[RMDB]
RNA sequence: GGGAACGACUCGAGUAGAGUCGAAAAGAGAAGAAGCGCGCGAAUUGGAAACCAGGGAACAAUAUUACGCGCGCAAGAAACCGGGCCUUGGUUCCUUGGAAAGAUUAGAUAAUUACCCUGGUAAGAACCCACGCAUAUCGUUCGCGAUAUGCGUGGGAAAAGAAACAACAACAACAAC
Reactivity to 2A3 in 0.01 (KOAc 150mM, MgCl2 10mM, bicine 150mM(pH8.5), 24C), signal-to-noise 1, nucleotides 027 to 126: g200a000g000a140a090g070a150a000g010c030g000c000g040c000g040a030a050u000u000g200g040a070a090a090c000c000a010g000g000g000a010a010c000a090a010u000a000u260u230a070c140g000c000g000c040g010c000a000a000g000a000a040a000c000c050g000g000g000c010c260u010u010g000g060u000u000c000c000u030u040g160g080a060a020a000g090a040u190u300a040g130a120u180a090a030u100u070a130c000c000c000u000g050g000u000a010a010g220a020a020
An RNA of 177 nucleotides, treated with 2A3 and read out base by base. The RNA was probed in 150 mM KOAc, 10 mM MgCl2 and 150 mM bicine (pH 8.5) at 24 C. The data come from the RNA Mapping Database (RMDB), library OK1LIB. 2A3 adducts were read by reverse transcription with SuperScript II with manganese. Reactivities are given for positions 27 through 126.